[RMDB]
The record gives the reactivity of an RNA of 207 nucleotides to 2A3.
RNA sequence: GGGAACGACUCGAGUAGAGUCGAAAACUAUAAAGAAGAAGCAGUAUUUUCCAGAUUUUCGGGCGUCUUUCUGCAGCAAGCAGCUAUGUUUGGAAGUAUUGUCCCGUAUCCAGCCAGGAUAUCCAUGUUCGAUGAUGAGAGGUCUGAGAAUAUUUGGGAACGCAGUCAAAUUCGUUUGACUGCGUUCAAAAGAAACAACAACAACAAC
Reactivity to 2A3 in 0.01 (KOAc 150mM, MgCl2 10mM, bicine 150mM(pH8.5), 24C), signal-to-noise 1, nucleotides 027 to 156: c010u040a000u100a300a110a000g060a050a040g020a100a010g060c030a010g000u070a060u040u110u080u000c020c010a050g050a120u120u070u030u060c070g050g000g000c060g040u110c030u000u180u000c010u040g010c010a020g010c050a060a040g080c080a030g000c070u210a130u140g090u060u200u020g010g040a000a070g050u110a070u070u090g080u100c000c000c010g030u000a030u000c010c000a010g110c060c010a030g000g030a030u010a020u080c040c000a040u100g010u040u070c050g000a030u020g010a030u050g020a010g030a060g100g000u060c050u110g100a050g060a100a000u060a090u090u100u130g100g000

The reactions ran in a buffer of 150 mM KOAc, 10 mM MgCl2 and 150 mM bicine (pH 8.5), at 24 C.